[RMDB]
Background:
The record gives the reactivity of an RNA of 177 nucleotides to DMS and 2A3. Conditions: 150 mM KOAc, 10 mM MgCl2 and 150 mM bicine (pH 8.5), 24 C.
RNA sequence: GGGAACGACUCGAGUAGAGUCGAAAACGCCAGUGGCAGGUGAUCGGUACGUUAUGUGCUGAGUCGCAAGCUAUAAGCGCACAUGCGAUGCGCGUCGCUGCGCGGGUCAGAAUCCGCCAACCUAGCAUCUAGGCAACCGCUUCGGUGGUUGUCUAGAAAAAGAAACAACAACAACAAC
Reactivity to DMS in 0.01 (KOAc 150mM, MgCl2 10mM, bicine 150mM(pH8.5), 24C), signal-to-noise 9, nucleotides 027 to 126: c100g010c030c050a130g010u000g000g010c020a040g000g020u010g000a050u000c020g000g010u010a030c050g020u020u050a070u050g010u000g010c000u000g010a030g010u020c000g000c020a110a040g010c020u000a090u010a090a130g010c020g010c030a050c060a170u030g010c130g000a090u000g010c030g010c030g000u020c120g000c030u000g000c120g000c010g000g000g000u000c080a070g000a140a090u020c030c020g000c060c060a090a060c060c030u000a060g020c110a160
Reactivity to 2A3 in 0.01 (KOAc 150mM, MgCl2 10mM, bicine 150mM(pH8.5), 24C), signal-to-noise 9, nucleotides 027 to 126: c040g040c010c010a020g040u040g060g000c010a010g000g020u010g010a020u030c010g000g010u030a030c030g060u150u230a130u290g040u030g010c000u010g010a050g090u020c010g000c020a020a010g000c000u030a020u030a180a030g000c010g030c010a010c010a050u200g100c070g110a120u030g000c010g000c010g020u020c030g000c010u030g000c050g000c000g040g000g010u000c010a010g030a070a060u040c020c010g020c030c020a040a050c020c000u030a050g040c010a060
Reactivities are given for positions 27 through 126. The DMS profile rests on 47,284 reads. Source: RMDB library OK1LIB, as collected in RNAgym. For DMS the reverse transcriptase was MarathonRT.